Overview
Chemical mapping of a 207-nucleotide RNA with 2A3 and DMS. Reactivities are given for positions 27 through 156. 2A3 adducts were read by reverse transcription with SuperScript II with manganese. For DMS the reverse transcriptase was MarathonRT. The RNA was probed in 150 mM KOAc, 10 mM MgCl2 and 150 mM bicine (pH 8.5) at 24 C.
[RMDB]
RNA sequence: GGGAACGACUCGAGUAGAGUCGAAAAAAGUGUAUUCCAACCUAAUGCUGUAUUUGCGCUACCAGAUGUGUUGGCGUCAAGCGCGUUGCUGCCAACCGCGACGUUGUUUGUGCCUGUAGUGUUUGCCAACAUCGCUUGAUAACCUACAGCGGUAUUAGAUCUCUAUGAAGUUCGCUUCAUAGAGAUCAAAAGAAACAACAACAACAAC
Reactivity to 2A3 in 0.01 (KOAc 150mM, MgCl2 10mM, bicine 150mM(pH8.5), 24C), signal-to-noise 5, nucleotides 027 to 156: a000a020g230u180g020u100a140u110u080c020c040a030a020c030c040u140a090a060u110g010c030u030g050u120a140u090u120u130g040c050g010c010u050a050c050c050a070g020a210u030g070u010g000u080u050g010g000c010g040u050c030a040a010g000c010g000c020g050u030u040g020c050u030g040c010c020a070a030c050c040g020c020g040a030c010g010u030u060g040u040u140u100g060u070g010c020c040u040g030u050a050g030u010g030u140u050u050g060c030c010a010a010c010a090u120c040g010c120u060u120g020a060u080a090a040c000c000u010a010c030a000g000c020g040g000u020a030u030u030a040
Reactivity to DMS in 0.01 (KOAc 150mM, MgCl2 10mM, bicine 150mM(pH8.5), 24C), signal-to-noise 2, nucleotides 027 to 156: a060a070g010u000g030u010a090u000u000c010c020a080a140c040c030u010a090a050u020g030c000u000g000u000a100u000u010u000g000c050g020c030u000a090c030c030a080g020a090u010g030u010g030u010u010g000g040c090g010u010c050a040a040g010c000g000c080g020u010u000g030c010u000g010c020c090a070a130c040c010g030c020g020a070c070g000u010u000g010u000u000u000g020u000g010c040c020u000g040u000a070g040u010g000u000u000u040g020c030c010a040a030c010a100u000c060g000c050u020u010g010a090u000a050a070c050c030u000a040c040a040g040c010g010g000u000a060u010u000a210